[RMDB]
RNA sequence: GGGAACGACUCGAGUAGAGUCGAAAACAGACCAAGUUCGCUUGGUCUGAAAGAAAGCGGAAAGCACCAGGGAGGGAAGGUGCGCGCCGCAACCACCCAUAAAAAGUACGAUCUUCGGAUCGUACAAGAUUGUGAAUAUCUUCGGAUAUUCACAAUCAAAAGAAACAACAACAACAAC
Reactivity to 2A3 in 0.01 (KOAc 150mM, MgCl2 10mM, bicine 150mM(pH8.5), 24C), signal-to-noise 9, nucleotides 027 to 126: c010a000g000a000c000c000a000a010g000u020u070c120g010c150u000u000g000g000u010c000u000g000a000a000a000g060a020a070a010g000c000g000g020a090a080a020g010c000a010c000c010a050g080g090g070a180g030g070g030a080a080g020g000u000g000c010g000c050g020c010c000g010c000a010a010c020c020a030c010c000c000a040u230a060a140a010a010a010g000u000a000c000g000a000u000c010u020u050c160g100g000a000u000c000g010u000a000c000a000a010
Reactivity to DMS in 0.01 (KOAc 150mM, MgCl2 10mM, bicine 150mM(pH8.5), 24C), signal-to-noise 5, nucleotides 027 to 126: c010a010g000a020c000c000a000a010g010u000u000c250g050c000u000u010g000g010u010c000u000g010a020a060a090g000a080a110a130g000c000g010g000a120a070a230g010c010a020c000c010a130g010g010g020a090g010g010g010a150a150g000g000u000g000c010g020c250g030c000c010g000c010a060a090c150c110a100c010c000c010a120u030a050a050a090a090a090g000u000a010c000g000a010u000c000u000u010c190g030g010a010u000c000g010u000a000c000a050a040